[RMDB]
RNA sequence: GGGAACGACUCGAGUAGAGUCGAAAAAUGAACUACUUUGGUAUCCUACUCUUUAUAAUUAUAGUGAAAGUUGGGAAAAUUGACUAAGGUACUUUUUGGAAGCAGGAUUAUCAGAACUAGGCUAGACUGACUUAAGGGUAAAGAUGAAGAAGGAAAGCCAUCAACUGUGUUUCGACACAGUUGAUGGAAAAGAAACAACAACAACAAC
Reactivity to 2A3 in 0.01 (KOAc 150mM, MgCl2 10mM, bicine 150mM(pH8.5), 24C), signal-to-noise 1, nucleotides 027 to 156: a000u040g000a000a030c000u010a000c000u260u000u010g030g040u090a130u040c010c010u000a010c030u070c050u120u300u140a090u190a170a110u210u140a090u150a300g020u010g080a280a040a000g000u140u220g000g000g000a040a140a190a300u070u070g040a080c000u010a090a000g000g010u070a040c000u000u030u030u060u170g050g050a040a000g060c030a030g010g010a030u000u040a000u100c000a000g010a050a010c070u040a030g000g030c000u000a000g000a000c000u030g000a010c000u080u260a030a040g150g000g000u050a000a000a140g050a010u110g000a010a070g000a000a030g070g020a070a070a130g100